[RMDB]
Structure probing data (2A3 and DMS) for a 207-nucleotide construct. For DMS, 1,830 sequencing reads were counted. Values cover nucleotides 27 to 156.

RNA sequence: GGGAACGACUCGAGUAGAGUCGAAAACUAAAGAGCAACUUUAGGUUGCUGAAAAUGAUUUAUGGGUAGUGGAAUAGGUUAACCGUAAGACCUUUGGUUGAAAAACUAUGAAAUUAAGCUUCAGAUAAAAACGGAGCCACGUUCGCGUGGCUCCGAACAGAAUAAAUUGGUUCGCCAAUUUAUUCUGAAAAGAAACAACAACAACAAC
Reactivity to 2A3 in 0.01 (KOAc 150mM, MgCl2 10mM, bicine 150mM(pH8.5), 24C), signal-to-noise 2, nucleotides 027 to 156: c020u060a110a050a030g100a010g030c000a000a030c020u180u260u260a130g070g050u010u000g050c000u000g000a020a020a000a060u170g020a040u070u130u190a130u120g070g020g000u080a050g010u070g070g090a090a030u040a060g020g040u030u080a050a010c020c000g020u020a080a030g070a100c030c050u020u020u080g060g020u030u040g040a130a040a040a070a040c080u040a060u210g030a020a000a080u050u070a070a000g020c050u080u020c050a080g020a180u130a150a160a000a000a010c020g000g000a010g000c000c000a000c050g050u080u100c150g000c030g030u000g000g000c020u000c000c000g010a000a000
Reactivity to DMS in 0.01 (KOAc 150mM, MgCl2 10mM, bicine 150mM(pH8.5), 24C), signal-to-noise 1, nucleotides 027 to 156: c000u000a070a130a140g000a160g030c040a030a050c020u000u020u000a040g050g050u030u010g000c020u030g010a040a070a120a090u000g030a140u010u030u020a100u000g000g040g020u000a080g000u000g010g000a120a150u000a010g000g050u010u010a060a130c060c070g000u000a060a130g000a090c020c040u000u000u000g000g020u000u000g000a120a030a140a070a070c030u030a070u000g010a180a060a080u020u010a110a180g030c100u000u000c030a130g010a200u000a050a010a070a130a130c000g040g020a000g030c030c030a000c040g000u000u000c300g010c090g070u000g000g050c000u040c010c010g010a000a010